The record gives the reactivity of an RNA of 207 nucleotides to 2A3 and DMS. Source: RMDB library OK3TST, as collected in RNAgym.
RNA sequence: GGGAACGACUCGAGUAGAGUCGAAAAGCUGAGUUAUGAUGGUUUGAUGCAUCAUAGUCUGAGUAGUGAACCUCAGACACUCAGCACAGACAGUAUGUCUCUAUGGUUCACUACAUAGAGGCUUGUGCAUCAAACCACAAGCACAUACUGUAGCUGACCAGUAAAUUUUAUUCGUAAAAUUUACUGGAAAAGAAACAACAACAACAAC
Reactivity to 2A3 in 0.01 (KOAc 150mM, MgCl2 10mM, bicine 150mM(pH8.5), 24C), signal-to-noise 9, nucleotides 027 to 156: g000c010u020g010a000g050u170u080a090u100g130a130u040g010g010u020u000u000g010a000u010g000c010a020u050c060a100u230a040g010u010c010u030g100a010g060u010a000g010u000g010a010a000c000c000u030c040a010g000a000c000a010c010u070c040a040g110c060a020c000a020g120a020c010a010g070u140a100u110g010u010c010u000c030u120a120u200g000g000u000u020c010a010c010u010a000c010a020u250a020g220a010g030g000c000u020u020g000u000g000c000a000u010c000a000a010a000c000c000a000c000a000a000g030c020a010c010a050u110a030c020u060g050u100a010g000c010u010g020a060
Reactivity to DMS in 0.01 (KOAc 150mM, MgCl2 10mM, bicine 150mM(pH8.5), 24C), signal-to-noise 4, nucleotides 027 to 156: g020c010u010g020a060g020u010u000a030u010g020a080u010g010g010u010u000u000g010a080u000g010c020a010u000c100a090u000a050g020u000c000u000g000a190g020u000a040g020u010g010a030a060c070c000u010c030a030g020a060c030a100c020u000c030a070g040c080a280c190a100g000a170c060a080g010u000a030u000g010u000c010u000c010u010a080u000g010g010u000u000c080a030c010u000a000c010a050u000a180g010a060g010g020c000u000u000g020u000g000c000a130u000c090a040a050a050c050c000a000c020a020a070g010c150a170c030a070u000a020c030u010g010u000a050g020c040u020g000a240
Overview: Conditions: 150 mM KOAc, 10 mM MgCl2 and 150 mM bicine (pH 8.5), 24 C. For DMS, 8,708 sequencing reads were counted. The 2A3 profile rests on 10,658 reads. Values cover nucleotides 27 to 156.